Structure probing data (DMS) for a 177-nucleotide construct.

RNA sequence: GGGAACGACUCGAGUAGAGUCGAAAAUUAUUGAUGGUUCCGUUGUCAGGCACCGUCAUUGAGCUAGGUGACUAUCUGCAUUUGGUUGGGCAGCGCGAGGCUUUGGAGAAAGUGCGACUGGUGGUCGAGCCCGUACGUAUUUCGAUACGUACGGGCUAAAAGAAACAACAACAACAAC
Reactivity to DMS in 0.01 (KOAc 150mM, MgCl2 10mM, bicine 150mM(pH8.5), 24C), signal-to-noise 1, nucleotides 027 to 126: u010u010a090u000u020g010a020u000g030g000u000u010c020c030g030u000u010g000u010c240a110g000g010c050a000c010c020g000u000c010a050u000u010g010a070g020c060u000a130g030g020u010g010a100c040u000a050u000c050u010g010c070a040u020u010u000g020g020u010u000g030g000g000c030a080g000c080g000c050g010a100g030g010c050u000u000u000g010g020a110g030a040a080a090g000u010g010c020g030a100c120u000g000g030u000g010g000u000c030g000
For DMS the reverse transcriptase was MarathonRT. The data come from the RNA Mapping Database (RMDB), library OK2TST.